[RMDB]
An RNA of 177 nucleotides, treated with 2A3 and DMS and read out base by base.

RNA sequence: GGGAACGACUCGAGUAGAGUCGAAAAAAGGCUGCGAACCACUAGAGGGGUGCUAGACAUUGAUGCUACGUGGUCGCAUUUCAGUCAGGGCCGCCGUAAUUAGCUAUGUGCACUUCAGGUUGCUGGCACCCUGACGUCCAUUCGUGGACGUCAGGGUAAAAGAAACAACAACAACAAC
Reactivity to 2A3 in 0.01 (KOAc 150mM, MgCl2 10mM, bicine 150mM(pH8.5), 24C), signal-to-noise 1, nucleotides 027 to 126: a000a030g060g000c030u000g000c000g000a170a050c000c030a010c000u030a000g000a060g000g010g010g000u010g000c000u000a020g030a140c010a130u150u120g020a010u210g030c000u020a070c090g000u070g000g000u000c000g000c050a000u000u040u010c020a030g060u000c020a030g000g160g000c020c040g000c070c000g140u130a260a120u120u000a030g000c000u000a000u170g130u050g090c060a000c120u130u000c120a030g000g150u090u010g060c000u000g000g000c000
Reactivity to DMS in 0.01 (KOAc 150mM, MgCl2 10mM, bicine 150mM(pH8.5), 24C), signal-to-noise 1, nucleotides 027 to 126: a010a020g000g010c050u000g000c000g000a220a020c050c020a130c030u000a070g000a130g100g000g000g000u000g000c000u020a050g000a160c040a060u030u060g000a130u020g000c060u000a050c070g000u000g020g050u010c010g090c040a060u000u020u010c190a000g000u000c000a050g000g000g000c000c000g060c000c080g000u000a020a020u010u030a290g000c010u000a080u010g030u000g000c080a160c020u000u070c050a120g020g010u000u110g040c010u000g000g060c130
Reactivities are given for positions 27 through 126. The data come from the RNA Mapping Database (RMDB), library OK1LIB. The RNA was probed in 150 mM KOAc, 10 mM MgCl2 and 150 mM bicine (pH 8.5) at 24 C. For DMS the reverse transcriptase was MarathonRT. The 2A3 profile rests on 483 reads. The DMS profile rests on 1,095 reads.